An RNA of 207 nucleotides, treated with 2A3 and DMS and read out base by base.
RNA sequence: GGGAACGACUCGAGUAGAGUCGAAAACGCAGUGACUCGGAAGCUCGGACUGUCUAGUAACAACAUAGGUGACCGCAAAUCCGCAAGGACUCGUACGGUCACUGAAUCCUGCCCAGUGCAGGUAUCUGAACACCUCGUACAAGAGGACGAAGGACCUGUCUGGAUAGAAGUUCGCUUCUAUCCAGACAAAAGAAACAACAACAACAAC
Reactivity to 2A3 in 0.01 (KOAc 150mM, MgCl2 10mM, bicine 150mM(pH8.5), 24C), signal-to-noise 2, nucleotides 027 to 156: c100g030c040a070g010u050g140a030c010u020c030g060g070a100a020g010c010u010c010g020g070a070c060u040g030u040c010u010a080g040u100a120a050c070a040a030c010a070u110a090g040g000u010g000a000c000c000g020c020a000a120a040u010c000c010g010c060a050a100g000g010a020c030u020c150g100u110a050c010g020g000u010c000a000c000u000g000a010a000u030c000c010u010g000c000c030c030a110g010u140g180c000a000g000g030u020a050u010c020u030g010a020a020c030a080c040c010u050c010g050u150a070c060a180a090g010a020g020g060a010c010g030a050a050g020g030a010c000c040u040
Reactivity to DMS in 0.01 (KOAc 150mM, MgCl2 10mM, bicine 150mM(pH8.5), 24C), signal-to-noise 1, nucleotides 027 to 156: c100g010c070a080g090u020g020a100c030u000c060g010g030a150a270g010c010u010c010g050g030a140c050u000g020u000c000u010a090g000u020a150a080c060a060a080c030a110u010a300g000g010u000g040a060c020c000g000c030a030a080a050u000c000c020g060c290a090a300g000g020a040c030u000c080g070u000a080c000g000g000u000c010a000c000u000g000a140a100u000c000c050u000g000c020c000c140a050g030u000g030c010a000g000g040u000a020u020c020u010g020a050a180c040a120c050c020u000c010g000u030a250c110a150a190g000a000g010g030a060c090g020a150a030g000g010a090c030c000u040

The RNA was probed in 150 mM KOAc, 10 mM MgCl2 and 150 mM bicine (pH 8.5) at 24 C. For DMS the reverse transcriptase was MarathonRT. The DMS profile rests on 1,426 reads. High DMS reactivity at an A or C suggests that its Watson-Crick edge is free.